RNA sequence: GGGAACGACUCGAGUAGAGUCGAAAACCCUGGUUAUUCGUAACCAGGGGUUGAGUGAAUCCUCUCAGUGCAUCGGUGGAUGACACGAAACGCAUGGACGACAAUUACGGUUAUUCGUAACCGUAAAUUGAACGAAGUUCUUCGGAACUUCGUUCAAAAAAGAAACAACAACAACAAC
Reactivity to DMS in 0.01 (KOAc 150mM, MgCl2 10mM, bicine 150mM(pH8.5), 24C), signal-to-noise 3, nucleotides 027 to 126: c000c000c000u000g000g010u010u000a020u000u020c160g030u000a010a010c000c000a000g010g010g000g000u000u000g010a130g010u010g020a200a090u000c010c010u000c120u020c020a080g020u000g000c060a030u000c030g030g040u000g010g020a070u010g000a160c020a010c000g010a030a070a090c100g000c030a060u000g010g010a090c080g000a050c120a060a130u000u000a000c000g020g010u000u000a030u000u000c200g000u000a000a000c000c000g000u000a000a020a100
Reactivity to 2A3 in 0.01 (KOAc 150mM, MgCl2 10mM, bicine 150mM(pH8.5), 24C), signal-to-noise 2, nucleotides 027 to 126: c000c000c000u020g000g030u020u030a060u090u090c200g020u010a000a010c000c000a010g000g000g010g000u060u100g060a040g020u100g140a060a070u070c030c010u000c020u000c030a010g030u000g080c000a030u050c050g200g040u200g130g070a120u080g040a060c000a030c040g050a080a070a020c050g040c040a030u080g050g040a010c030g000a050c070a100a060u060u000a030c000g030g000u010u060a040u080u070c200g030u020a000a020c010c000g000u010a000a000a030

This 177-nucleotide RNA was probed chemically with DMS and 2A3. The reactions ran in a buffer of 150 mM KOAc, 10 mM MgCl2 and 150 mM bicine (pH 8.5), at 24 C. It was measured as part of the RMDB library M2PK50. For DMS the reverse transcriptase was MarathonRT.